RNA sequence: GGGAACGACUCGAGUAGAGUCGAAAAAUUGCGUGCUUGCCGGCCGCCGCGACCAGUGCACUAACGCUGACCGCUUGGCCGCCGCGCGGGCAAAUGUUGCUAGCACGGCAGGUGUCAGGGUGGCCGAUGCCUAGAGGCACUUCGGUGCCUCUAGGCAAAAAGAAACAACAACAACAAC
Reactivity to 2A3 in 0.01 (KOAc 150mM, MgCl2 10mM, bicine 150mM(pH8.5), 24C), signal-to-noise 1, nucleotides 027 to 126: a010u100u030g010c130g010u080g130c060u000u030g180c000c000g000g000c000c000g000c000c010g070c010g000a000c000c000a010g000u060g120c090a000c180u300a300a000c300g000c000u000g000a090c000c110g000c200u300u300g160g000c000c050g000c080c000g000c010g000c000g000g000g000c110a080a110a190u270g140u260u110g000c010u000a010g000c000a000c000g010g000c070a170g070g000u060g070u100c100a080g220g000g000u070g000g020c000c000g010a010
Chemical mapping of a 177-nucleotide RNA with 2A3. The data come from the RNA Mapping Database (RMDB), library OK1LIB.